[RMDB]
RNA sequence: GGGAACGACUCGAGUAGAGUCGAAAAAAAGAUAUGGAGUCGAGUAAGGACUGAUGACCACACAAUGAAGUGGUCGGAAACGACCAUGGAAGUUGUGUGCAAGGUCUAUCUCGACUCCUAAGUCAAAGGUAAUUUUUAAGUUCGCUUAAAAAUUACCAAAAGAAACAACAACAACAAC
Reactivity to DMS in 0.01 (KOAc 150mM, MgCl2 10mM, bicine 150mM(pH8.5), 24C), signal-to-noise 4, nucleotides 027 to 126: a090a130a110g000a030u000a300u010g000g000a020g000u000c000g010a040g020u020a140a200g000g000a000c010u000g000a080u010g000a140c300c000a000c000a010c010a020a020u000g000a300a220g000u000g000g040u010c000g020g000a080a090a250c000g010a000c000c000a020u020g010g000a150a130g000u000u000g000u010g000u000g000c020a050a060g010g000u000c010u000a300u000c010u010c020g000a000c000u000c000c010u000a010a060g000u000c060a070a100a140
Reactivity to 2A3 in 0.01 (KOAc 150mM, MgCl2 10mM, bicine 150mM(pH8.5), 24C), signal-to-noise 2, nucleotides 027 to 126: a000a000a010g070a040u120a030u160g000g000a000g010u000c010g010a010g050u140a300a300g110g000a000c020u020g120a300u140g020a140c000c040a000c000a010c000a030a100u300g010a060a000g010u000g000g000u010c010g000g010a030a050a010c000g000a000c000c010a010u010g000g030a100a070g010u010u020g000u000g000u000g000c000a050a080g000g000u000c000u010a050u030c000u000c010g000a000c000u000c000c000u010a010a000g020u040c030a060a010a040
About this RNA:
The record gives the reactivity of an RNA of 177 nucleotides to DMS and 2A3. The DMS profile rests on 2,619 reads. The RNA was probed in 150 mM KOAc, 10 mM MgCl2 and 150 mM bicine (pH 8.5) at 24 C.